[RMDB]
RNA sequence: GGGAACGACUCGAGUAGAGUCGAAAAGAACGCACCGGCGAGUUGCCCCUUGACCUGCAUCGCCGCGCCGGGGCGGCCGGCCUGUUGGGCGCCGGACUGCCCGAAUCCGCUGGCGGGGGCGGCGGCGGCAUUUACGACGAUUCGUCGUCGUAAAUGCAAAAGAAACAACAACAACAAC
Reactivity to DMS in 0.01 (KOAc 150mM, MgCl2 10mM, bicine 150mM(pH8.5), 24C), signal-to-noise 3, nucleotides 027 to 126: g000a090a120c030g010c020a060c040c040g000g000c010g000a050g020u010u000g000c030c020c000c060u000u010g000a160c030c020u000g050c100a070u010c030g020c030c030g010c010g010c020c040g010g020g010g000c000g000g000c030c000g000g000c020c030u000g020u020u050g010g010g010c110g020c010c000g000g000a050c030u000g000c000c000c000g010a070a110u010c030c040g010c040u020g010g050c060g000g000g020g010g020c010g010g010c030g000g020c090g000
Reactivity to 2A3 in 0.01 (KOAc 150mM, MgCl2 10mM, bicine 150mM(pH8.5), 24C), signal-to-noise 3, nucleotides 027 to 126: g070a050a020c060g000c040a040c030c010g030g000c020g020a070g060u070u090g100c000c010c000c000u040u140g080a100c020c030u060g040c020a080u120c040g000c000c010g000c000g000c010c010g000g000g010g000c000g000g000c000c000g000g000c000c020u160g040u120u150g100g050g010c100g000c000c000g000g020a070c020u040g000c000c000c000g010a030a070u040c010c010g010c080u090g060g000c040g000g010g000g000g000c000g020g000c000g010g020c010g010